The record gives the reactivity of an RNA of 207 nucleotides to 2A3.
[RMDB]
RNA sequence: GGGAACGACUCGAGUAGAGUCGAAAAGCGGGGCUUGAAACGCGGGUAGCGCGCACGCCCGGCGAAGAAGUUCGCAUACGCGGUGUGCGGGUGCCGAAGUGUCUGCUGCAACGGCACGCUCGACACCUAGAACAUACCGUAUUCGUACGGUAUGUAACUGAUCAUGAAGCUUCGGCUUCAUGAUCAGAAAAGAAACAACAACAACAAC
Reactivity to 2A3 in 0.01 (KOAc 150mM, MgCl2 10mM, bicine 150mM(pH8.5), 24C), signal-to-noise 1, nucleotides 027 to 156: g040c050g000g270g010g030c060u050u100g040a060a100a060c040g000c000g010g000g040u060a040g010c090g000c000g000c070a000c000g000c000c000c000g040g000c000g000a010a010g040a050a010g230u000u030c010g020c040a050u060a270c020g040c210g000g010u010g000u040g000c030g000g040g030u010g000c000c010g000a020a000g010u060g040u150c060u080g000c030u070g050c040a010a010c020g030g050c000a000c010g000c010u000c000g050a060c060a050c030c010u030a030g020a130a010c000a020u000a000c010c000g000u000a010u000u110c180g030u000a010c000g000g000u000a000u000g000u010a020a050
The reactions ran in a buffer of 150 mM KOAc, 10 mM MgCl2 and 150 mM bicine (pH 8.5), at 24 C. It was measured as part of the RMDB library M2RFOK.